[RMDB]
RNA sequence: GGGAACGACUCGAGUAGAGUCGAAAAGAUAUGGACCGAGACCGAUAAGACGGUGUCGGAAACGACACCCGUCUUUUGACGGUCGGCGUCCUAAGUCAAAACAUUCUUCAGUUCGCUGAAGAAUGAACGUAUCACUCCCCUUCGGGGGAGUGAUACGAAAAGAAACAACAACAACAAC
Reactivity to DMS in 0.01 (KOAc 150mM, MgCl2 10mM, bicine 150mM(pH8.5), 24C), signal-to-noise 1, nucleotides 027 to 126: g000a030u000a230u000g000g000a010c020c000g010a190g010a010c000c000g010a160u010a030a000g000a010c010g000g000u000g000u000c000g000g000a000a000a100c000g010a000c000a000c140c060c070g040u000c000u000u000u030u000g000a160c010g010g000u000c010g010g010c270g010u000c000c000u000a030a100g000u000c030a130a080a210a200c020a010u000u000c000u000u000c000a000g010u000u010c240g060c000u000g000a010a010g000a010a000u000g010a020a090
The record gives the reactivity of an RNA of 177 nucleotides to DMS. The reactions ran in a buffer of 150 mM KOAc, 10 mM MgCl2 and 150 mM bicine (pH 8.5), at 24 C. Source: RMDB library TTRDEL, as collected in RNAgym. Values are in units of 0.01, from 0 to 300, in steps of 10.